[RMDB]
RNA sequence: GGGAACGACUCGAGUAGAGUCGAAAAAGCCACCGCUACGGCGGUGGCAAGUAGAAAAGUUGGUGCUUAGACCACGCCCUCUACCGUAAUAAUAGAUAAAAAGGCGAGUAUCAGUACGCUGAUACAAAAAACACUCACACGUUCGCGUGUGAGUGAACAGAAUCACUUGGUUCGCCAAGUGAUUCUGAAAAGAAACAACAACAACAAC
Reactivity to 2A3 in 0.01 (KOAc 150mM, MgCl2 10mM, bicine 150mM(pH8.5), 24C), signal-to-noise 1, nucleotides 027 to 156: a010g000c000c000a010c020c010g000c000u060a070c210g100g000c000g000g010u000g030g000c030a000a000g010u010a000g000a020a030a040a000g030u010u030g040g000u080g000c170u260u110a070g030a090c010c000a030c000g000c010c000c000u010c000u010a040c050c010g070u010a010a020u090a120a050u080a200g080a090u170a120a060a030a010a000g030g000c060g020a000g000u000a000u000c000a000g010u040a000c200g000c080u010g010a000u000a000c000a030a180a000a000a000a000c010a000c000u020c010a000c000a000c000g020u060u080c300g010c000g060u000g000u000g000a000g000u000g040a020a000